The record gives the reactivity of an RNA of 177 nucleotides to 2A3 and DMS. The reactions ran in a buffer of 150 mM KOAc, 10 mM MgCl2 and 150 mM bicine (pH 8.5), at 24 C. Reactivities are given for positions 27 through 126.

RNA sequence: GGGAACGACUCGAGUAGAGUCGAAAAUAAGAAUUUCACAUAAUGGUAGUUGCUAACACAAGGUAUUGCUGGUAACUUUUGGGGGCUGAGGUGAAGAGAUAUGCAAUAUUACAUAAAGGUAGGCAGACCCGCUAAGAUAAUUCGUUAUCUUAGCGGGAAAAGAAACAACAACAACAAC
Reactivity to 2A3 in 0.01 (KOAc 150mM, MgCl2 10mM, bicine 150mM(pH8.5), 24C), signal-to-noise 1, nucleotides 027 to 126: u190a040a050g050a040a130u050u120u140c020a030c030a050u210a080a110u110g080g000u040a030g000u080u020g020c030u080a090a020c070a010c040a120a030g040g030u090a060u060u110g040c050u060g040g030u020a040a030c000u110u050u110u160g090g000g000g040g000c040u070g050a020g000g000u010g020a040a040g020a010g000a050u000a040u200g000c000a090a000u040a030u160u080a020c020a020u120a100a060a020g030g000u000a010g050g010c000a000g000a020
Reactivity to DMS in 0.01 (KOAc 150mM, MgCl2 10mM, bicine 150mM(pH8.5), 24C), signal-to-noise 2, nucleotides 027 to 126: u010a130a100g010a080a070u000u010u010c020a060c060a110u000a060a060u010g020g010u000a090g000u000u000g010c060u010a070a040c090a070c130a060a110g020g000u000a040u010u000g030c050u000g010g020u000a030a070c080u000u010u020u000g010g000g010g010g010c090u010g000a030g010g010u000g010a070a060g010a060g000a090u000a020u000g010c080a050a100u010a090u000u000a090c120a070u000a020a040a070g020g030u020a050g000g010c060a070g010a210